The data come from the RNA Mapping Database (RMDB), library TTRDES. The record gives the reactivity of an RNA of 177 nucleotides to DMS and 2A3. The RNA was probed in 150 mM KOAc, 10 mM MgCl2 and 150 mM bicine (pH 8.5) at 24 C.

RNA sequence: GGGAACGACUCGAGUAGAGUCGAAAAGAUAUGGAGGAUCCCAUGUGCUGAUGACCAGAAUCGGAAACGAUUCUGCAAGGCAUGCAUGGGAGUCCUCCUAAGUCAAAGCGUAAGUUCGCUUACGCAACGAUAUAGAUUGGUUCGCCAAUCUAUAUCGAAAAGAAACAACAACAACAAC
Reactivity to DMS in 0.01 (KOAc 150mM, MgCl2 10mM, bicine 150mM(pH8.5), 24C), signal-to-noise 9, nucleotides 027 to 126: g000a040u000a300u010g000g010a020g010g000a300u000c000c000c000a010u000g020u010g020c050u000g000a070u010g000a200c300c000a010g000a010a010u000c000g010g000a120a090a200c010g010a010u000u000c000u000g000c010a070a080g000g020c010a090u000g020c040a010u000g000g000g000a030g010u000c000c000u000c000c000u000a000a080g010u000c050a090a150a150g010c000g010u000a010a010g010u000u020c300g010c000u000u000a010c000g020c010a100a150
Reactivity to 2A3 in 0.01 (KOAc 150mM, MgCl2 10mM, bicine 150mM(pH8.5), 24C), signal-to-noise 9, nucleotides 027 to 126: g020a030u080a050u160g000g000a000g010g000a010u000c020c000c000a010u020g060u090g010c040u030g010a300u100g030a110c050c000a000g000a000a000u000c010g010g030a050a060a050c010g000a000u000u010c000u000g000c000a040a070g020g000c030a020u300g060c010a000u000g000g000g000a020g010u020c000c000u000c000c000u000a030a000g020u000c050a090a080a010g000c000g010u000a010a010g020u050u240c300g010c190u000u000a000c010g000c010a010a020
For 2A3 the reverse transcriptase was SuperScript II with manganese. For DMS the reverse transcriptase was MarathonRT.